Chemical mapping of a 177-nucleotide RNA with DMS and 2A3. For DMS, 1,732 sequencing reads were counted. DMS adducts were read by reverse transcription with MarathonRT.

RNA sequence: GGGAACGACUCGAGUAGAGUCGAAAACGCCACCUGCAAGGGGGAGAAGAAGCUGUUGCACUUCAUCCAGCUUGUCAUCAUGUGGAAGAACAGCUUGUUUGAGUUUGUGUCUGAGCACCGGCUCAACCUGGUAUUGACCUUUCGAGGUCAAUACCAGAAAAGAAACAACAACAACAAC
Reactivity to DMS in 0.01 (KOAc 150mM, MgCl2 10mM, bicine 150mM(pH8.5), 24C), signal-to-noise 2, nucleotides 027 to 126: c180g000c010c000a050c040c120u020g000c060a060a040g000g010g030g000g000a120g010a030a060g010a120a060g020c010u010g000u000u000g020c110a190c030u010u000c040a150u010c050c020a020g000c020u000u000g000u020c050a100u000c100a060u000g000u000g000g010a060a060g010a150a110c150a100g000c060u000u000g010u000u000u000g000a040g010u000u000u000g000u000g020u020c080u000g000a120g020c050a040c030c020g050g000c000u000c000a030a020c110
Reactivity to 2A3 in 0.01 (KOAc 150mM, MgCl2 10mM, bicine 150mM(pH8.5), 24C), signal-to-noise 1, nucleotides 027 to 126: c000g050c060c040a030c000c020u070g000c030a010a010g000g060g000g060g060a040g010a050a000g070a080a020g000c060u160g000u290u240g000c090a080c070u040u010c020a240u000c000c000a020g150c050u040u000g060u090c000a120u000c010a030u210g000u040g070g100a070a080g000a150a060c000a020g120c160u210u020g040u170u120u000g010a000g010u100u150u120g050u080g010u040c130u110g140a050g160c000a070c090c030g060g030c030u010c000a000a000c010